[RMDB]
Notes: Source: RMDB library OK2TRN, as collected in RNAgym. The record gives the reactivity of an RNA of 177 nucleotides to DMS and 2A3. As a SHAPE reagent, 2A3 marks flexible, mostly unpaired nucleotides at the ribose 2'-OH. The RNA was probed in 150 mM KOAc, 10 mM MgCl2 and 150 mM bicine (pH 8.5) at 24 C.

RNA sequence: GGGAACGACUCGAGUAGAGUCGAAAAUGAGCUGUGAACUGUCCCGGGCUGGCGCCCCCGUGGUCUGGAGCCACAAUGGGAGGCCCGUGCAGGAGGGCGAGGGCCUAGAGCUCCAUGCCGAGGGCCCCAUCAAAACGCCAUUCGUGGCGUUUUGAUGAAAAGAAACAACAACAACAAC
Reactivity to DMS in 0.01 (KOAc 150mM, MgCl2 10mM, bicine 150mM(pH8.5), 24C), signal-to-noise 2, nucleotides 027 to 126: u010g000a130g000c020u000g050u020g000a140a180c070u000g000u000c010c020c030g020g010g040c050u000g000g000c200g000c050c010c000c200c120g020u010g000g020u000c080u000g000g010a170g010c020c020a050c060a150a110u010g010g010g020a140g010g000c020c010c020g000u010g000c050a070g000g010a110g020g000g000c000g010a120g010g010g030c030c010u000a080g000a210g010c000u000c100c120a160u000g000c060c010g000a300g000g000g010c000c000c010
Reactivity to 2A3 in 0.01 (KOAc 150mM, MgCl2 10mM, bicine 150mM(pH8.5), 24C), signal-to-noise 1, nucleotides 027 to 126: u120g000a030g000c000u000g050u020g220a110a090c020u060g040u220c000c050c000g010g010g000c020u040g050g080c050g150c040c000c000c010c020g020u030g000g030u050c080u210g100g120a060g000c010c010a040c020a010a110u160g040g000g050a080g000g040c020c000c000g050u050g020c000a010g010g060a060g030g010g030c000g020a150g010g020g000c040c000u020a060g000a010g020c000u100c170c020a180u250g020c020c010g040a000g000g000g000c000c010c020